RNA sequence: GGGAACGACUCGAGUAGAGUCGAAAAGAGCUAAAUCAGGAAUUGAAGCAGCAAUUAUCGCAAGAUACUACGCUGAUUCUGACCCAGCCCAAAGGUGAGCCAGAAGUGAAUGUGAAAGCGCUGCAAGCGCAUUCCCGCCUUUCGAGGCGGGAAUGCGAAAAGAAACAACAACAACAAC
Reactivity to 2A3 in 0.01 (KOAc 150mM, MgCl2 10mM, bicine 150mM(pH8.5), 24C), signal-to-noise 2, nucleotides 027 to 126: g060a000g050c070u080a050a060a020u110c040a040g040g060a100a160u120u100g030a210a010g040c000a000g000c030a030a100u060u040a050u050c030g000c050a000a070g000a030u080a070c020u040a030c130g000c020u000g020a060u050u000c020u030g080a050c020c020c050a030g040c000c000c040a050a060a000g000g010u050g020a010g010c000c000a020g020a110a030g100u090g030a070a070u120g050u060g050a080a020a020g020c030g030c020u030g020c070a050a050g050
Reactivity to DMS in 0.01 (KOAc 150mM, MgCl2 10mM, bicine 150mM(pH8.5), 24C), signal-to-noise 4, nucleotides 027 to 126: g000a060g010c050u010a040a120a100u010c040a050g000g020a100a110u010u010g010a100a100g010c050a030g020c030a140a120u000u000a010u000c010g000c260a090a120g000a040u010a020c150u000a080c200g010c020u000g000a100u000u010c020u010g000a120c060c010c020a110g000c020c000c090a030a110a090g000g010u010g000a060g020c050c030a060g000a060a070g010u000g000a130a070u000g000u000g010a040a060a080g000c060g010c030u000g020c160a070a100g000
Structure probing data (2A3 and DMS) for a 177-nucleotide construct. The DMS profile rests on 2,547 reads. For 2A3 the reverse transcriptase was SuperScript II with manganese. DMS adducts were read by reverse transcription with MarathonRT. The RNA was probed in 150 mM KOAc, 10 mM MgCl2 and 150 mM bicine (pH 8.5) at 24 C. In probing experiments dimethyl sulfate is read out at A N1 and C N3, which are open when not base-paired. Values cover nucleotides 27 to 126.